Source: RMDB library M2PK90, as collected in RNAgym. This 177-nucleotide RNA was probed chemically with DMS.
RNA sequence: GGGAACGACUCGAGUAGAGUCGAAAAAUAAAACUGCGUAGGGGGGACGGAGAAGGCUAUGUUGGCCGGGCGACGGUUGUCCCGGUUUAAGCGUGUAGGCUGGUUUUCCAGGCAAAUCCAAAAAAAACAUAUCGUCUUGGUUCGCCAAGACGAUAUGAAAAGAAACAACAACAACAAC
Reactivity to DMS in 0.01 (KOAc 150mM, MgCl2 10mM, bicine 150mM(pH8.5), 24C), signal-to-noise 2, nucleotides 027 to 126: a080u010a040a060a040a120c090u010g020c050g000u000a060g010g020g000g020g030g010a070c110g010g000a090g010a070a080g010g010c080u010a050u000g010u000u000g020g030c030c000g000g010g000c300g000a050c130g000g010u000u000g000u010c020c010c010g010g030u000u000u000a070a100g010c050g030u010g030u000a030g000g020c030u010g000g000u000u000u000u000c050c010a140g000g020c060a030a040a090u000c040c050a000a010a010a010a010a050a080a120
The DMS profile rests on 1,040 reads. Reactivities are given for positions 27 through 126. The reactions ran in a buffer of 150 mM KOAc, 10 mM MgCl2 and 150 mM bicine (pH 8.5), at 24 C.